The data come from the RNA Mapping Database (RMDB), library 15KLIB. An RNA of 170 nucleotides, treated with DMS and 2A3 and read out base by base. For DMS the reverse transcriptase was MarathonRT. The RNA was probed in 150 mM KOAc, 10 mM MgCl2 and 150 mM bicine (pH 8.5) at 24 C. Values cover nucleotides 27 to 129. High 2A3 reactivity points to a flexible backbone, as in loops and unpaired stretches.
RNA sequence: GGGAACGACUCGAGUAGAGUCGAAAAUCAUGACUGCUAACAAUCUAACUGCACCUAGAAAUUCUUGGGAGGCUAUGGCUCUGAACUUUAAGUUAAUAGGUAUUGGCGGUACACCUUGUAUAAAGGUAAAGGUCGACGUUCGCGUCGACCAAAAGAAACAACAACAACAAC
Reactivity to DMS in 0.01 (KOAc 150mM, MgCl2 10mM, bicine 150mM(pH8.5), 24C), signal-to-noise 2, nucleotides 027 to 129: u080c030a030u010g020a080c000u040g030c080u070a090a090c080a070a220u010c030u010a000a000c030u020g030c140a100c000c030u030a030g020a020a060a010u090u050c020u070u000g000g000g000a170g010g020c030u000a010u060g030g000c040u030c040u000g040a010a030c080u120u000u000a080a010g020u050u010a070a080u000a060g040g020u020a080u040u000g040g030c000g010g000u030a110c070a020c040c050u000u040g030u060a060u090a090a030a050g060g010u130a050a080a120
Reactivity to 2A3 in 0.01 (KOAc 150mM, MgCl2 10mM, bicine 150mM(pH8.5), 24C), signal-to-noise 3, nucleotides 027 to 129: u110c010a030u180g060a060c030u020g000c010u030a070a000c020a020a100u050c020u050a050a080c010u150g020c080a020c030c030u000a000g050a020a060a050u190u020c040u000u020g040g000g000a000g000g070c010u020a010u060g020g040c020u060c040u000g030a090a070c070u090u040u050a070a000g000u000u130a120a040u050a070g000g000u030a020u000u120g060g000c000g010g010u060a020c030a010c010c000u000u000g010u090a130u110a160a040a030g000g000u000a040a000a000
For 2A3, 4,006 sequencing reads were counted.